[RMDB]
RNA sequence: GGGAACGACUCGAGUAGAGUCGAAAAGUGCGCUAUUUCGAUAGCGCACAAAGGCGGCGAGUCUCGCUCGGCGGCGCGCGACAGCCCGCAGCGCAGCCGGAACAUAACGCCACUUCGGUGGCGUUAAGUUUCUAAGAGUUUUCGAACUCUUAGAAACAAAAGAAACAACAACAACAAC
Reactivity to 2A3 in 0.01 (KOAc 150mM, MgCl2 10mM, bicine 150mM(pH8.5), 24C), signal-to-noise 2, nucleotides 027 to 126: g010u010g000c010g000c000u000a010u010u130u040c030g060a000u000a000g000c000g000c000a000c000a000a010a000g010g010c020g020g010c030g020a040g030u040c020u020c080g050c030u030c010g020g000c020g020g020c010g010c000g010c000g040a020c010a050g130c040c100c030g040c030a060g010c020g010c010a010g000c010c020g010g000a070a020c030a030u110a030a000c030g000c000c000a000c000u070u080c240g060g000u000g010g000c010g000u000u000a010a000
Reactivity to DMS in 0.01 (KOAc 150mM, MgCl2 10mM, bicine 150mM(pH8.5), 24C), signal-to-noise 5, nucleotides 027 to 126: g020u000g000c000g010c000u000a000u000u000u010c160g020a020u000a010g010c000g000c000a000c000a010a040a120g020g000c020g010g010c040g010a120g010u000c040u000c050g010c050u000c030g020g000c020g010g020c040g020c050g010c020g010a110c140a150g020c110c060c020g020c050a050g020c010g020c010a030g000c000c000g010g010a080a090c150a140u000a010a010c000g010c000c000a000c000u000u000c200g020g010u000g010g010c000g010u000u000a010a070